An RNA of 177 nucleotides, treated with 2A3 and DMS and read out base by base.
Values are in units of 0.01, from 0 to 300, in steps of 10.

RNA sequence: GGGAACGACUCGAGUAGAGUCGAAAAGCGAGGCAAACGCCUGAGCGACGGUGGCCGGAUGGUAGCGGUAUAUGGGACAGGUCACCCCGGUGCCGAACAAGAUGCUGCUGGUGCUGUUGCCCACCAAGUAUCAACCUCUCUUCGGAGAGGUUGAUACAAAAGAAACAACAACAACAAC
Reactivity to 2A3 in 0.01 (KOAc 150mM, MgCl2 10mM, bicine 150mM(pH8.5), 24C), signal-to-noise 4, nucleotides 027 to 126: g050c070g020a090g030g010c060a030a040a050c060g000c000c040u050g010a010g010c010g040a060c000g000g040u040g080g030c000c000g020g030a060u150g020g050u110a060g070c030g000g090u090a150u020a060u200g150g020g050a050c070a160g040g040u120c020a030c000c010c000c000g020g000u010g000c000c000g030a060a060c080a080a050g100a040u220g010c020u030g020c020u030g010g030u010g040c030u010g070u100u040g030c010c010c000a030c020c000a080a010
Reactivity to DMS in 0.01 (KOAc 150mM, MgCl2 10mM, bicine 150mM(pH8.5), 24C), signal-to-noise 2, nucleotides 027 to 126: g020c020g010a130g000g000c030a050a090a270c200g000c010c010u020g010a130g050c040g000a210c020g050g020u000g000g000c050c030g040g010a160u000g000g000u000a090g020c010g000g010u000a060u010a030u030g020g030g030a030c050a040g000g010u010c060a080c040c020c030c000g000g000u020g000c020c010g010a150a120c130a020a120g000a080u010g010c010u000g000c030u030g010g020u010g000c040u000g010u000u010g000c050c000c040a080c030c070a030a180

For DMS the reverse transcriptase was MarathonRT. For 2A3 the reverse transcriptase was SuperScript II with manganese. The 2A3 profile rests on 2,297 reads. Source: RMDB library OK1LIB, as collected in RNAgym.